[RMDB]
RNA sequence: GGGAACGACUCGAGUAGAGUCGAAAACCGAGUGAGUUCGCUCACUCGGAAAGAAGUGUGCGCAAACUGCUGCGACAGUAGCGACAAGAGCAGCAAGCAAAAAAACAAACCUGUUCGCAGGUUUGAACAUGAUUCUAGACUUCGGUCUAGAAUCAUGAAAAGAAACAACAACAACAAC
Reactivity to DMS in 0.01 (KOAc 150mM, MgCl2 10mM, bicine 150mM(pH8.5), 24C), signal-to-noise 3, nucleotides 027 to 126: c010c010g020a010g020u010g010a040g020u010u010c230g010c010u000c000a020c010u000c010g000g000a040a040a050g000a120a110g010u000g010u010g020c080g020c070a060a100a100c090u000g010c000u010g010c050g000a090c170a040g010u000a070g010c060g000a050c100a120a080g010a160g010c020a030g040c040a050a090g020c090a010a010a050a050a020a040a150c020a030a000a000c000c000u000g010u010u000c160g030c000a000g010g000u000u000u000g000a070a120
Reactivity to 2A3 in 0.01 (KOAc 150mM, MgCl2 10mM, bicine 150mM(pH8.5), 24C), signal-to-noise 3, nucleotides 027 to 126: c000c000g000a000g010u000g000a020g000u020u200c180g020c100u000c000a000c010u000c010g000g080a060a060a000g070a050a050g070u090g010u080g090c010g000c040a110a110a130c030u030g020c010u060g030c020g030a020c040a040g080u080a040g110c040g060a050c060a100a030g050a020g080c000a000g030c020a040a050g030c070a020a060a100a040a070a000a010c000a010a020a000c010c000u010g030u050u050c210g000c070a000g000g010u000u000u010g000a020a010